An RNA of 177 nucleotides, treated with DMS and read out base by base. It was measured as part of the RMDB library OK2TST. Reactivities are given for positions 27 through 126.
RNA sequence: GGGAACGACUCGAGUAGAGUCGAAAAGGACUGUCGGUCUUGUUGCCCAGAACAUCAUUCCACGCAGUAUUGAUACUAAAGUCGUCAAUGGCUUUAAAGAAACCUUCAAAGUUCGUCCACAGGCAACUGCUAGUUUGAUCUUCGGAUCAAACUAGCAAAAAGAAACAACAACAACAAC
Reactivity to DMS in 0.01 (KOAc 150mM, MgCl2 10mM, bicine 150mM(pH8.5), 24C), signal-to-noise 1, nucleotides 027 to 126: g000g000a090c050u020g020u000c110g000g000u000c020u000u000g000u000u020g020c020c010c070a220g000a020a020c080a100u000c020a170u000u010c040c060a090c150g000c020a110g000u000a080u000u010g000a100u010a060c100u000a060a050a020g000u000c050g000u020c160a070a080u050g000g020c000u000u000u000a010a060a180g020a110a030a060c070c110u000u020c080a100a070a170g000u000u000c070g000u000c020c030a020c090a150g000g020c060a100a060c100
Conditions: 150 mM KOAc, 10 mM MgCl2 and 150 mM bicine (pH 8.5), 24 C.